[RMDB]
RNA sequence: GGGAACGACUCGAGUAGAGUCGAAAAACGGUAUGGACGUGCAUACGUGCACGUCCAUACCGAACAGCAGCUGUUCCUUCCCUUUCCCCCAACAUGUAUUUCCCCAGAUGCCAUCCUACAUGUUCACAUUGAAGAGAUAAGCCUCUCAGAAGGAAGAUAACCAUAGAAAGUUGAAAAGAGAAACCUCUUUAGAUGCUGGUUUAUUAAGAAGAAUGAAGGCAGAUGUGACUGGGGCCAAAGAUCUCAGUGCACAUUCCUGACACUCAAACGUGCUAUUCGUAGCACGUAAAAGAAACAACAACAACAAC
Reactivity to DMS in 0.01 (KOAc 150mM, MgCl2 10mM, bicine 150mM(pH8.5), 24C), signal-to-noise 3, nucleotides 027 to 266: a150c030g000g010u000a000u000g010g010a020c010g010u000g020c000a030u000a130c160g040u000g010c000a000c010g020u000c000c010a020u000a010c010c010g010a020a030c120a070g020c050a080g020c100u000g020u000u000c020c010u000u000c020c000c010u010u010u020c010c030c010c090c110a050a060c120a020u010g020u020a050u010u000u000c010c020c000c110a100g000a060u000g000c050c030a050u000c050c040u010a080c070a040u020g010u000u010c130a100c090a080u010u010g010a120a080g010a060g000a120u000a090a170g010c090c010u000c060u000c030a080g020a090a100g000g000a030a100g000a070u000a030a060c060c070a050u000a170g000a080a130a100g000u000u010g000a120a030a040a020g000a030g010a200a180a190c170c010u000c010u000u000u000a130g010a030u000g000c030u000g000g000u010u020u000a020u020u000a060a110g010a080a080g010a040a050u000g010a100a020g000g000c210a050g030a030u000g000u000g000a070c020u000g000g000g010g010c050c120a030a090a140g000a110u020c010u000c000a010g000u000g020c010a020c000a040u000u010c040c030u010g000a110c230a040c080u000c070a060a090